[RMDB]
Description
An RNA of 207 nucleotides, treated with 2A3 and read out base by base. As a SHAPE reagent, 2A3 marks flexible, mostly unpaired nucleotides at the ribose 2'-OH. The data come from the RNA Mapping Database (RMDB), library RNAMAK. 2A3 adducts were read by reverse transcription with SuperScript II with manganese. The 2A3 profile rests on 925 reads.
RNA sequence: GGGAACGACUCGAGUAGAGUCGAAAACGCUGGGGUGGAGUUUAGCAUCGAUCGUCUGAAGCGCGCACGGACGGGAGCUAACUCGUAACAUCCCUGUGCUGAAGCGCGCACGGCAACCGAAAGGUGCGAAACUAGAUGAGUUUCGACUCAUCUAGAACCCUAGCUACACCUUCGGGUGUAGCUAGGGAAAAGAAACAACAACAACAAC
Reactivity to 2A3 in 0.01 (KOAc 150mM, MgCl2 10mM, bicine 150mM(pH8.5), 24C), signal-to-noise 1, nucleotides 027 to 156: c070g000c040u110g020g000g030g000u030g060g000a030g040u190u130u120a000g000c040a070u300c050g010a000u010c010g000u040c000u050g110a190a100g030c020g000c000g000c000a000c000g040g020a000c000g030g000g000a000g000c000u000a000a000c000u050c030g080u130a180a050c000a020u020c000c000c000u000g040u030g000c000u030g020a230a010g000c000g000c000g000c020a000c000g010g000c020a000a010c020c020g150a010a130a010g030g000u060g030c020g070a080a100a070c000u010a000g000a000u030g000a010g010u010u060u300c250g070a060c000u000c000a000u000c000u000a000g000a020a030